[RMDB]
RNA sequence: GGGAACGACUCGAGUAGAGUCGAAAACAUCGGCUGCCGUGUUCUUUUUCCUCUUGGAGGUUGGAGUCCCCUGGGCGCCCCCACACGGCUAGACGCCUCGGCUGGUUCGCGACGCAGACCCCCGGCCCGCAUACGAUCUUUUCGAAGAUCGUAUGCGAAAAGAAACAACAACAACAAC
Reactivity to 2A3 in 0.01 (KOAc 150mM, MgCl2 10mM, bicine 150mM(pH8.5), 24C), signal-to-noise 2, nucleotides 027 to 126: c030a080u070c040g030g000c010u020g020c000c000g050u030g030u100u090c070u050u040u030u040u020c010c000u040c030u060u110g110g030a050g070g000u020u050g030g050a030g040u000c000c020c000c050u060g000g010g010c010g030c000c010c000c000c000a020c000a000c010g020g000c020u030a030g030a050c000g030c020c000u010c010g050g000c000u020g010g000u040u040c020g000c000g050a050c030g000c050a020g040a070c000c000c000c000c000g020g030c020c000
Reactivity to DMS in 0.01 (KOAc 150mM, MgCl2 10mM, bicine 150mM(pH8.5), 24C), signal-to-noise 1, nucleotides 027 to 126: c070a120u020c020g010g000c020u010g000c020c030g020u000g000u000u000c030u050u000u010u020u000c010c000u000c110u010u000g010g000a040g010g010u000u010g010g000a180g000u010c020c040c020c050u000g000g000g010c030g020c000c040c040c000c050a040c080a080c060g000g020c000u000a100g000a120c110g000c070c020u000c060g040g000c010u000g000g000u020u000c010g000c030g010a140c060g000c050a070g000a120c030c000c010c060c000g000g000c030c070
An RNA of 177 nucleotides, treated with 2A3 and DMS and read out base by base. Source: RMDB library RFM100, as collected in RNAgym. 2A3 adducts were read by reverse transcription with SuperScript II with manganese. The 2A3 profile rests on 2,270 reads. DMS adducts were read by reverse transcription with MarathonRT. The reactions ran in a buffer of 150 mM KOAc, 10 mM MgCl2 and 150 mM bicine (pH 8.5), at 24 C. For DMS, 2,322 sequencing reads were counted.